[RMDB]
RNA sequence: GGGAACGACUCGAGUAGAGUCGAAAAUAAUGGAAUCAUCCAUCACCAAUUAAACAACUGUGCAACCAUUACAGGUCGUUUAUCAGGUUCUCGACCCAAUAUGCAGAACAUACCACGAGACGGUACAUAGGGGUAGUCUUUUCGAAGACUACCCCUAAAAAGAAACAACAACAACAAC
Reactivity to DMS in 0.01 (KOAc 150mM, MgCl2 10mM, bicine 150mM(pH8.5), 24C), signal-to-noise 1, nucleotides 027 to 126: u030a070a090u060g000g070a040a050u050c300a080u070c010c050a020u000c060a060c000c040a180a120u040u010a040a070a090c040a100a110c010u020g000u000g020c050a000a070c190c190a040u050u000a010c010a230g000g000u000c040g030u000u000u000a000u050c150a000g050g000u000u000c000u000c000g000a100c100c000c080a070a000u000a020u020g020c110a030g000a000a190c040a060u000a020c040c070a070c080g050a030g000a030c100g050g000u000a020c120a150
Reactivity to 2A3 in 0.01 (KOAc 150mM, MgCl2 10mM, bicine 150mM(pH8.5), 24C), signal-to-noise 2, nucleotides 027 to 126: u260a040a070u040g000g070a040a130u140c050a060u080c010c010a010u070c000a080c000c030a090a140u040u190a100a030a000c040a040a040c050u020g000u020g040c020a040a210c010c030a060u100u000a010c070a080g060g000u040c030g000u030u000u050a100u050c030a030g010g060u090u060c060u010c010g050a100c000c020c000a000a060u150a040u190g000c000a000g010a080a000c000a050u100a090c040c070a020c060g040a040g010a040c030g000g030u010a010c010a060
Conditions: 150 mM KOAc, 10 mM MgCl2 and 150 mM bicine (pH 8.5), 24 C.
Structure probing data (DMS and 2A3) for a 177-nucleotide construct.
The 2A3 profile rests on 931 reads.
For DMS, 1,157 sequencing reads were counted.
2A3 adducts were read by reverse transcription with SuperScript II with manganese.
Values are in units of 0.01, from 0 to 300, in steps of 10.